[RMDB]
RNA sequence: GGGAACGACUCGAGUAGAGUCGAAAACACACAAGGUUCGCCUUGUGUGCAAGAAUAGACGAAUACUACCGUAGAAGUAUUCAGGUCACAUAACUACGGUAAUGGCGUUCUGCUUCGGCAGAACGAAAUCGUCUGGAUUAUUCGUAAUCCAGACGAUAAAAGAAACAACAACAACAAC
Reactivity to 2A3 in 0.01 (KOAc 150mM, MgCl2 10mM, bicine 150mM(pH8.5), 24C), signal-to-noise 5, nucleotides 027 to 126: c010a000c000a000c000a000a000g020g010u020u060c130g140c070c000u000u000g000u000g000u000g010c010a050a030g080a090a080u190a130g090a070c050g030a040a020u050a080c020u050a180c000c000g010u010a000g020a180a010g040u020a050u080u070c060a020g080g120u130c070a040c010a220u150a150a050c020u010a000c010g000g000u060a060a090u100g150g010c010g010u000u000c010u000g010c000u020u020c130g120g000c000a010g000a010a000c000g000a010a020
Reactivity to DMS in 0.01 (KOAc 150mM, MgCl2 10mM, bicine 150mM(pH8.5), 24C), signal-to-noise 4, nucleotides 027 to 126: c010a010c000a000c020a010a000g000g030u010u010c250g030c000c000u010u000g020u010g010u010g020c070a050a070g010a120a080u000a060g010a120c100g000a050a070u000a050c030u000a040c010c020g010u010a010g000a110a110g010u000a040u000u000c080a070g020g010u000c090a060c090a060u010a060a110c000u000a000c000g000g000u020a020a090u010g010g010c000g000u000u000c000u000g010c000u000u010c190g010g010c000a010g000a000a000c000g010a020a050
Chemical mapping of a 177-nucleotide RNA with 2A3 and DMS. 2A3 adducts were read by reverse transcription with SuperScript II with manganese. The reactions ran in a buffer of 150 mM KOAc, 10 mM MgCl2 and 150 mM bicine (pH 8.5), at 24 C. It was measured as part of the RMDB library M2PK50.